[RMDB]
RNA sequence: GGGAACGACUCGAGUAGAGUCGAAAAACACGAUAGCUAGGACCCAAACUGGGAUUAGAUACCCCACUAUGCCUAGCCCUAAACCCAAAUAGUUACAUAACAAAACUAUUCGCCAGAGUACUACUCGCAACUGCCUAAAACUCAAAGGACUUGGCGGGUGUACAUUUGUCUUCGGACAAAUGUACACAAAAGAAACAACAACAACAAC
Reactivity to 2A3 in 0.01 (KOAc 150mM, MgCl2 10mM, bicine 150mM(pH8.5), 24C), signal-to-noise 3, nucleotides 027 to 156: a000c030a020c050g080a080u110a030g000c010u010a020g010g010a050c080c070c000a090a070a010c080u050g010g000g000a010u080u100a070g050a060u180a120c020c000c000c000a040c030u090a030u120g020c000c000u010a010g020c000c010c010u120a090a040a060c010c000c040a060a040a000u010a000g050u040u050a040c060a120u200a250a100c030a120a180a010a000c010u060a050u060u060c010g010c020c040a020g000a000g160u060a090c030u020a020c020u040c040g040c080a080a120c080u130g000c010c000u100a110a080a090a070c050u050c110a100a090a090g010g010a030c010u050u030g040g000c000g010g030